Background:
Structure probing data (2A3) for a 170-nucleotide construct.

RNA sequence: GGGAACGACUCGAGUAGAGUCGAAAAGACCCUAAGUAUCAAGUCAUUGUCUUAAAAGACAAUGUACUUUCUUCUAUGCUUAGAUUGCACACCGUUGAGUCAGGUGAUAUUAACGUUGUUGCAGCUUCAGCAAAUAUCUUCGGAUAUUUGAAAAGAAACAACAACAACAAC
Reactivity to 2A3 in 0.01 (KOAc 150mM, MgCl2 10mM, bicine 150mM(pH8.5), 24C), signal-to-noise 3, nucleotides 027 to 129: g110a000c000c010c010u000a070a020g020u010a010u100c110a050a000g000u000c000a040u000u000g000u000c020u070u240a100a070a000a000g020a000c000a020a000u000g010u030a000c070u010u000u110c040u150u010c070u000a030u080g000c000u010u010a040g060a080u240u090g020c060a020c000a030c020c120g000u000u030g080a040g130u060c150a220g000g210u090g200a030u110a260u160u040a020a010c050g000u050u060g130u060u220g000c000a030g000c000u080u080c010a030g000